This 177-nucleotide RNA was probed chemically with DMS and 2A3. The data come from the RNA Mapping Database (RMDB), library OK1LIB.
RNA sequence: GGGAACGACUCGAGUAGAGUCGAAAACUGCCGACGCCCUGUGUUGAGGCGUGGUGUCGCCUCGAGUCAGUCGUUGAGAUCCGAAGAAGGGUGUACUUCUGACUGAUCGAGCAGAAGUGAGUCGAGGGCGUCUGCCGAGGUUCGCCUUGGUGGGCGCAAAAGAAACAACAACAACAAC
Reactivity to DMS in 0.01 (KOAc 150mM, MgCl2 10mM, bicine 150mM(pH8.5), 24C), signal-to-noise 9, nucleotides 027 to 126: c040u000g000c030c020g000a050c020g010c010c020c010u010g010u010g010u010u010g000a100g000g010c020g020u010g000g010u020g010u000c040g010c060c000u000c000g000a070g010u010c010a020g010u010c020g020u010u000g000a240g010a030u010c000c020g010a210a110g010a150a120g000g010g010u020g010u030a060c000u000u000c010u030g020a080c070u000g000a040u000c040g010a120g010c050a050g000a080a070g010u020g000a080g010u000c010g010a110g010g000
Reactivity to 2A3 in 0.01 (KOAc 150mM, MgCl2 10mM, bicine 150mM(pH8.5), 24C), signal-to-noise 7, nucleotides 027 to 126: c010u020g010c000c000g040a000c000g000c000c000c010u050g010u010g030u050u160g070a030g010g030c000g000u010g010g030u030g020u010c010g010c000c000u000c000g000a010g100u000c000a000g000u000c000g000u010u000g020a060g000a040u000c000c010g020a100a030g070a060a090g070g010g000u040g020u040a080c000u000u000c030u050g020a010c000u000g000a010u010c010g010a000g000c010a010g010a140a010g050u050g040a010g020u020c010g010a030g000g040
About this RNA
2A3 adducts were read by reverse transcription with SuperScript II with manganese. Values cover nucleotides 27 to 126. For 2A3, 28,966 sequencing reads were counted.